[RMDB]
RNA sequence: GGGAACGACUCGAGUAGAGUCGAAAAGGCUGGAGAGCUGAAGGGUGACUCACAUCCCACUGUGUUUGAGCAGUUCUCUCUCUACGAUGCGGGAGGUGUAGGCUGUGAGGCCUGUGAGCGAGGUGACAUGACCGUGUCACUUCGGUGACACGGUCAUAAAAGAAACAACAACAACAAC
Reactivity to 2A3 in 0.01 (KOAc 150mM, MgCl2 10mM, bicine 150mM(pH8.5), 24C), signal-to-noise 1, nucleotides 027 to 126: g020g000c010u000g030g040a020g000a010g030c010u000g130a020a050g060g040g000u010g100a020c020u010c060a030c000a010u040c040c050c000a000c000u030g010u000g030u100u220u120g100a040g010c050a020g000u280u060c050u010c000u030c020u000c000u020a080c050g150a130u200g050c160g000g020g010a020g080g030u110g010u080a110g000g000c000u030g050u030g050a040g000g000c000c000u050g010u020g020a010g000c030g000a000g000g010u020g030a020c020
Reactivity to DMS in 0.01 (KOAc 150mM, MgCl2 10mM, bicine 150mM(pH8.5), 24C), signal-to-noise 2, nucleotides 027 to 126: g020g010c060u010g010g010a060g010a130g020c060u000g020a090a130g030g010g010u000g010a140c090u010c040a030c060a070u000c000c000c070a140c090u010g010u010g000u010u000u010g000a160g000c060a070g010u000u000c060u000c030u000c000u000c030u000a060c090g030a160u010g030c080g000g010g010a030g000g000u000g010u020a030g020g000c030u010g020u010g000a200g010g010c010c010u010g030u000g000a070g020c090g000a060g000g000u000g010a070c160